[RMDB]
RNA sequence: GGGAACGACUCGAGUAGAGUCGAAAACUAUGGUGAGCCCCUAUCUAGUAUAGCAAUCCACCAAGCAGGUGAAUUCACACAAUUCAGGUUCUCAUAGAAAAUGCGCCCUGACUUGACAGGUAUGGUCGCCGGGACGAUGAUUCGUCAUCGUCCCGGCAAAAGAAACAACAACAACAAC
Reactivity to 2A3 in 0.01 (KOAc 150mM, MgCl2 10mM, bicine 150mM(pH8.5), 24C), signal-to-noise 1, nucleotides 027 to 126: c000u010a000u030g170g030u160g000a020g090c000c010c010c010u020a040u040c010u060a100g090u200a130u010a080g040c090a000a030u000c080c000a000c010c000a000a030g120c130a060g030g020u020g000a020a040u020u020c000a000c000a000c010a130a140u130u180c050a030g020g010u000u000c010u000c010a020u080a020g050a080a130a010a030u110g010c030g070c000c000c000u050g050a050c000u010u070g010a030c040a030g000g110u180a000u130g140g000u000c020
Background:
An RNA of 177 nucleotides, treated with 2A3 and read out base by base. For 2A3 the reverse transcriptase was SuperScript II with manganese. For 2A3, 554 sequencing reads were counted. Reactivities are rounded to 0.1 and cut off at 0 and 3. Values cover nucleotides 27 to 126. It was measured as part of the RMDB library OK1LIB.